[RMDB]
RNA sequence: GGGAACGACUCGAGUAGAGUCGAAAAUAAUGAGACAAAUUCUCAAUAUUUGUUUAGUACUAUUAAUGCUCUACCAGAAACUUCUGCCGAUAUUCUGGUGGUUGAUGAGGUUAGUAUGUGCACUAAUGACCCAUCACCUUCGGGUGAUGGAAAAGAAACAACAACAACAAC
Reactivity to 2A3 in 0.01 (KOAc 150mM, MgCl2 10mM, bicine 150mM(pH8.5), 24C), signal-to-noise 8, nucleotides 027 to 129: u100a010a110u060g030a000g000a010c100a060a180a100u300u020c020u000c000a040a010u070a070u080u040u080g110u000u080u050a020g000u010a020c030u010a010u070u020a040a010u100g100c000u020c000u020a020c010c030a000g030a060a160a150c050u080u050c050u120g190c060c080g050a070u020a060u140u000c010u030g000g020u020g040g000u070u080g110a170u090g020a000g030g040u000u000a000g010u020a020u270g050u010g030c030a000c050u070a060a070u100g060a060c010
Reactivity to DMS in 0.01 (KOAc 150mM, MgCl2 10mM, bicine 150mM(pH8.5), 24C), signal-to-noise 4, nucleotides 027 to 129: u020a000a000u030g000a000g010a020c230a080a070a090u110u000c000u040c020a000a090u020a060u010u010u020g010u010u000u010a020g000u000a050c000u000a000u000u060a010a020u030g000c030u020c030u070a000c020c000a020g020a040a040a120c140u030u030c050u050g040c160c040g010a050u020a090u010u000c000u030g000g060u010g030g030u000u000g000a010u030g010a160g020g010u000u000a030g020u000a030u110g000u000g030c040a090c070u000a020a060u000g030a120c030

This 170-nucleotide RNA was probed chemically with 2A3 and DMS. For 2A3, 13,252 sequencing reads were counted. It was measured as part of the RMDB library 15KLIB.